[RMDB]
This 177-nucleotide RNA was probed chemically with 2A3 and DMS.
RNA sequence: GGGAACGACUCGAGUAGAGUCGAAAAUGCCUCGGCGGCGGCCUGCUCGCGCAGCCAGGCGAGGAACAGCGAGAGGGGCGCUCGUUGCGCCGCUCCUGGCAGGCUCACCGCGUAAUAGGCGAAGCGACCUGAUGAUAGCUUUCGAGCUAUCAUCAGGAAAAGAAACAACAACAACAAC
Reactivity to 2A3 in 0.01 (KOAc 150mM, MgCl2 10mM, bicine 150mM(pH8.5), 24C), signal-to-noise 3, nucleotides 027 to 126: u100g010c010c010u020c080g180g010c000g000g000c020g020g010c010c000u010g040c000u010c020g090c030g020c110a010g090c040c110a060g030g050c020g020a060g030g060a190a090c070a040g060c040g070a010g010a020g060g230g010g020c020g030c010u070c110g220u130u190g020c020g000c020c020g060c000u000c020c010u020g000g020c020a010g000g000c130u170c090a050c020c020g010c000g000u060a100a180u080a180g010g050c040g000a040a000g080c040g090a090
Reactivity to DMS in 0.01 (KOAc 150mM, MgCl2 10mM, bicine 150mM(pH8.5), 24C), signal-to-noise 3, nucleotides 027 to 126: u010g030c000c000u010c250g020g050c010g030g040c240g010g020c010c010u000g010c010u010c070g000c020g010c150a120g010c100c150a060g000g000c040g010a020g000g010a060a110c060a100g000c100g000a070g020a050g000g020g000g020c020g030c000u010c300g000u000u000g000c090g010c010c000g000c010u000c000c050u010g010g020c010a020g000g030c000u010c010a050c060c000g000c030g020u010a090a140u000a090g010g010c010g010a090a090g000c130g010a200